An RNA of 177 nucleotides, treated with DMS and 2A3 and read out base by base. Values cover nucleotides 27 to 126. 2A3 adducts were read by reverse transcription with SuperScript II with manganese. Reactivities are rounded to 0.1 and cut off at 0 and 3. The RNA was probed in 150 mM KOAc, 10 mM MgCl2 and 150 mM bicine (pH 8.5) at 24 C.
RNA sequence: GGGAACGACUCGAGUAGAGUCGAAAAUCCUAGCCUUGAUGAAAGGCUUGUGAUACGAUGUGAUAGCUGGGUUUAAAAAGUGCAAUAUUAAAACAAAAGCCAUGAGUCUUUUAAGCCCAGUGUGUAAUAUCGUAUUCAGGUUCGCCUGAAUACGAUAAAAAGAAACAACAACAACAAC
Reactivity to DMS in 0.01 (KOAc 150mM, MgCl2 10mM, bicine 150mM(pH8.5), 24C), signal-to-noise 5, nucleotides 027 to 126: u000c000c000u000a010g010c000c010u000u020g010a130u060g000a210a020a010g000g010c010u010u030g020u020g010a070u000a040c060g000a060u000g000u010g010a120u010a250g010c000u000g000g010g010u000u000u000a010a000a020a020a080g040u020g030c040a070a120u010a140u030u040a070a090a120a110c220a050a060a110a160g010c100c110a070u020g010a180g000u030c040u000u000u000u000a010a010g000c000c000c010a000g000u000g000u010g020u000a050a050
Reactivity to 2A3 in 0.01 (KOAc 150mM, MgCl2 10mM, bicine 150mM(pH8.5), 24C), signal-to-noise 2, nucleotides 027 to 126: u000c000c000u010a000g000c010c000u050u010g050a140u130g070a060a000a000g000g000c000u010u020g010u000g000a090u040a080c160g000a040u060g000u060g080a020u000a050g000c000u000g000g000g030u000u000u020a070a060a020a020a020g110u170g030c000a020a120u120a080u220u300a130a060a070a010c080a050a140a040a000g060c040c030a090u100g000a000g120u000c030u000u040u000u010a000a000g000c000c000c000a000g010u020g030u000g000u020a020a040